[RMDB]
Structure probing data (2A3) for a 207-nucleotide construct.
The reactions ran in a buffer of 150 mM KOAc, 10 mM MgCl2 and 150 mM bicine (pH 8.5), at 24 C.
RNA sequence: GGGAACGACUCGAGUAGAGUCGAAAAUGGGCGAUCGCUCGCUGUUUUUGUGGCUGGCUUUCAGCGGGCUGGAGGAGCCGGGAGCGGAGGCGGAGGACCGAGACAAAAACGUCAGCCGAGGCCGGGCAAUAUCGUGGACUGUUCGCAGUCCACGAAACUAUUUAGUCGGAUUCGUCCGACUAAAUAGAAAAGAAACAACAACAACAAC
Reactivity to 2A3 in 0.01 (KOAc 150mM, MgCl2 10mM, bicine 150mM(pH8.5), 24C), signal-to-noise 2, nucleotides 027 to 156: u070g000g040g000c040g050a090u060c060g020c010u020c020g000c030u010g050u020u030u010u040u050g060u060g030g010c020u010g020g000c020u020u070u010c020a020g030c020g000g010g000c020u050g040g040a050g030g060a040g050c040c070g030g000g000a060g040c060g000g040a040g050g020c010g020g010a030g020g020a010c010c050g050a050g040a070c110a030a040a020a040a000c030g020u020c000a010g000c000c000g000a040g030g000c070c030g030g000g000c020a030a050u040a050u150c000g000u000g000g000a010c000u000g010u060u100c230g020c100a000g000u030c000c000a010c000g000a000a000a000